RNA sequence: GGGAACGACUCGAGUAGAGUCGAAAACUAGUCGACACCAUGUCUCAUGCAAUUUUAGAUGAGUUGGUCGGGUUCAGACCCAAAGUUAUCAUAGGGAAAGGUCAAGUGGUACCGUCAACGGCAGAAAUGGUGGAAUGUGGUUCGCCACAUUCCACCAAAAAGAAACAACAACAACAAC
Reactivity to DMS in 0.01 (KOAc 150mM, MgCl2 10mM, bicine 150mM(pH8.5), 24C), signal-to-noise 1, nucleotides 027 to 126: c090u020a050g000u000c010g000a070c030a160c080c030a020u060g040u000c000u010c000a010u000g000c230a040a150u050u000u000u000a100g030a000u000g000a020g000u000u000g020g020u000c060g000g000g000u020u010c090a090g000a300c000c000c010a020a110a150g030u000u000a110u000c070a020u030a140g020g000g010a040a070a070g000g000u040c070a070a040g020u000g020g000u000a140c040c020g040u000c140a080a100c060g000g000c080a150g000a070a050a170